Structure probing data (DMS and 2A3) for a 177-nucleotide construct. For DMS, 13,134 sequencing reads were counted. DMS adducts were read by reverse transcription with MarathonRT.
[RMDB]
RNA sequence: GGGAACGACUCGAGUAGAGUCGAAAAGUCUAGCGAAAGGAUCCCACCCGGGACACACGCAAGUCGCGAAUUAAGCCGACCGGCCAAGGUCAAUUGCAGAACUCAACUGCAUGAGUAAGCUAGACGAGAUUAUACUGACUUUCGAGUCAGUAUAAUCAAAAGAAACAACAACAACAAC
Reactivity to DMS in 0.01 (KOAc 150mM, MgCl2 10mM, bicine 150mM(pH8.5), 24C), signal-to-noise 9, nucleotides 027 to 126: g010u000c000u010a010g010c000g000a100a180a150g010g000a070u000c000c000c010a170c300c020c050g000g000g000a110c130a040c060a130c140g000c040a100a070g010u000c080g010c030g020a160a140u010u010a080a130g010c070c050g010a150c010c280g000g000c010c040a130a150g000g010u000c020a050a080u000u000g000c000a010g000a080a090c180u010c280a070a080c000u000g010c010a010u000g010a170g000u010a120a130g000c010u000a010g000a020c000g000a090
Reactivity to 2A3 in 0.01 (KOAc 150mM, MgCl2 10mM, bicine 150mM(pH8.5), 24C), signal-to-noise 9, nucleotides 027 to 126: g000u000c000u000a000g000c010g070a170a040a040g110g010a050u010c000c000c000a020c010c010c000g030g020g030a020c020a010c000a010c080g020c060a080a050g140u120c050g020c020g070a120a210u270u080a240a030g050c050c030g040a030c010c010g030g000c020c020a050a040g020g000u020c010a010a070u070u010g000c000a000g030a200a110c070u080c270a060a150c020u010g000c010a010u040g010a010g080u040a040a020g000c000u000a000g000a000c000g000a010